Structure probing data (DMS and 2A3) for a 177-nucleotide construct. DMS adducts were read by reverse transcription with MarathonRT. It was measured as part of the RMDB library M2PK50. Conditions: 150 mM KOAc, 10 mM MgCl2 and 150 mM bicine (pH 8.5), 24 C. As a SHAPE reagent, 2A3 marks flexible, mostly unpaired nucleotides at the ribose 2'-OH. The 2A3 profile rests on 1,781 reads.
[RMDB]
RNA sequence: GGGAACGACUCGAGUAGAGUCGAAAAUCACACGAGUUCGCUCGUGUGAAAAUAAUAGUCGCUAGAAAACGAUCAAAACUAGCGACAUACAUAACGAUCGUAAAACGCCUGGCUUCGGCCAGGCGAACAUUAACGUCACGUUCGCGUGACGUUAAUGAAAAGAAACAACAACAACAAC
Reactivity to DMS in 0.01 (KOAc 150mM, MgCl2 10mM, bicine 150mM(pH8.5), 24C), signal-to-noise 1, nucleotides 027 to 126: u000c000a020c000a000c000g000a000g020u000u020c200g000c000u000c000g040u000g020u000g020a010a030a060a030u000a050a100u010a120g000u000c000g000c010u000a010g000a090a030a050a030c020g010a020u010c000a050a040a130a100c000u010a000g000c000g010a000c000a010u010a070c230a090u000a050a150c110g000a010u000c000g020u000a100a080a100a190c010g000c000c020u000g000g000c020u000u010c160g020g020c000c000a000g000g000c030g010a010a010
Reactivity to 2A3 in 0.01 (KOAc 150mM, MgCl2 10mM, bicine 150mM(pH8.5), 24C), signal-to-noise 1, nucleotides 027 to 126: u040c010a000c000a010c000g000a010g010u080u060c110g140c110u020c020g000u000g000u010g000a000a000a000a000u020a000a010u030a070g000u000c000g010c000u000a020g010a110a100a030a040c040g020a020u030c010a000a030a010a140c000u010a000g010c010g000a000c010a000u100a000c010a030u150a100a120c100g020a020u040c010g050u080a050a050a040a140c030g000c000c000u010g000g000c010u020u090c240g060g020c000c000a000g010g000c000g010a010a000